[RMDB]
RNA sequence: GGGAACGACUCGAGUAGAGUCGAAAAGUCUGUUUAGUGAGUGGACAGGAUGCCAGUCUGGCAGUUUGCAUUGGCAAUAAAUCACUACUAGACAUUUUAUUUAAAAUCUGGCACUGGCUUUGGAGAGUUUGACUCAAAGAUUCGUCUUUGAGUCAAAAAAAGAAACAACAACAACAAC
Reactivity to DMS in 0.01 (KOAc 150mM, MgCl2 10mM, bicine 150mM(pH8.5), 24C), signal-to-noise 6, nucleotides 027 to 126: g000u020c050u010g000u000u010u010a020g010u010g000a040g010u010g010g020a100c110a080g010g010a120u010g000c010c000a040g010u010c100u000g010g020c080a100g010u010u020u010g010c060a200u010u010g020g020c020a050a040u010a040a080a080u030c020a010c010u000a020c030u010a010g000a020c020a030u020u030u020u010a090u020u030u020a060a050a060a070u020c040u000g000g010c030a050c120u000g000g000c030u000u010u010g000g010a090g010a100g000
Reactivity to 2A3 in 0.01 (KOAc 150mM, MgCl2 10mM, bicine 150mM(pH8.5), 24C), signal-to-noise 6, nucleotides 027 to 126: g050u000c020u030g030u020u010u020a020g010u020g300a020g020u040g030g080a040c010a090g080g020a060u080g000c000c000a000g030u040c040u060g090g030c040a100g020u060u110u150g040c060a070u070u090g110g000c010a010a030u080a120a070a020u060c000a000c000u010a010c010u010a010g000a000c000a000u040u100u040u040a160u020u140u110a060a100a030a040u050c020u030g010g000c010a000c060u030g010g010c030u050u080u060g030g030a050g000a000g090